[RMDB]
RNA sequence: GGGAACGACUCGAGUAGAGUCGAAAAGACUGGGACCGUUGUUCGUGGCACCCAGCUCUGUGUCGACUCACACGGAAUCGUCGGGUCUUAUGUGUUUGGAUAAGACUUGACUAAACUUAACAAACUCGCUUAAUGUGAUCCCUGCUGGCCGGGCAGCCUAGGGCAUAUCGUUCGCGAUAUGCCCUAGAAAAGAAACAACAACAACAAC
Reactivity to 2A3 in 0.01 (KOAc 150mM, MgCl2 10mM, bicine 150mM(pH8.5), 24C), signal-to-noise 3, nucleotides 027 to 156: g020a010c010u010g000g020g050a090c080c050g050u050u080g130u200u190c180g010u150g020g030c070a160c030c000c000a020g000c080u010c000u020g210u020g080u040c010g020a000c010u010c030a040c000a020c100g020g030a020a050u040c040g000u000c000g010g000g000u000c020u010u010a000u020g230u040g030u040u200u230g100g030a010u000a010a000g010a000c030u010u000g000a010c010u020a010a030a010c010u050u170a060a030c030a080a100a040c010u000c030g050c040u080u160a130a070u290g050u060g080a080u030c010c000c010u010g000c000u010g020g060c030c080g050g020g060c010a010g000c000
Reactivity to DMS in 0.01 (KOAc 150mM, MgCl2 10mM, bicine 150mM(pH8.5), 24C), signal-to-noise 1, nucleotides 027 to 156: g000a010c010u000g010g050g000a040c100c020g050u000u010g000u000u010c160g000u010g030g010c000a250c050c010c010a070g000c050u010c020u010g000u010g040u000c010g030a080c040u000c000a250c090a160c030g010g030a060a080u000c070g010u000c020g000g010g040u000c000u010u000a000u010g020u010g010u000u000u010g040g000a020u010a020a010g010a060c040u000u010g000a050c050u010a030a170a110c070u000u000a110a160c110a100a110a040c020u000c010g000c100u000u010a110a110u020g010u000g000a100u000c030c000c030u000g000c040u000g010g000c010c030g000g010g070c040a080g060c040